[RMDB]
RNA sequence: GGGAACGACUCGAGUAGAGUCGAAAAGUGCACAAAGAGUGGUUUCAUGACAUCCCAUUGCCUUGGCAUGCUGGGGCAGACACCGGAACUCCACACUGGAACAACAAAGAGGCAUUGGUAGAAUUCAGCACCGAGUAGUAUUCGUACUACUCGGUGCAAAAGAAACAACAACAACAAC
Reactivity to DMS in 0.01 (KOAc 150mM, MgCl2 10mM, bicine 150mM(pH8.5), 24C), signal-to-noise 2, nucleotides 027 to 126: g030u000g010c060a020c130a070a070a040g000a140g030u000g000g040u000u000u000c110a160u000g010a050c150a120u010c040c000c000a100u000u000g000c010c030u020u000g000g000c150a080u000g020c030u010g050g010g000g000c050a100g000a100c120a070c040c040g000g000a090a110c080u000c020c020a040c110a070c110u010g020g020a040a060c070a020a050c060a030a100a110g000a040g000g050c030a030u000u000g010g000u000a060g000a150a130u000u010c050a050
Reactivity to 2A3 in 0.01 (KOAc 150mM, MgCl2 10mM, bicine 150mM(pH8.5), 24C), signal-to-noise 1, nucleotides 027 to 126: g010u050g040c080a030c010a160a050a030g140a080g060u080g040g030u100u020u060c060a040u160g040a030c020a070u040c030c000c020a030u030u070g000c030c020u020u010g000g000c020a060u080g000c050u040g010g010g000g000c010a000g030a030c050a040c040c000g090g040a040a020c020u000c000c000a020c010a040c070u140g030g050a110a020c040a020a010c000a040a040a020g080a030g050g000c020a030u010u110g030g000u040a030g110a070a080u220u060c000a030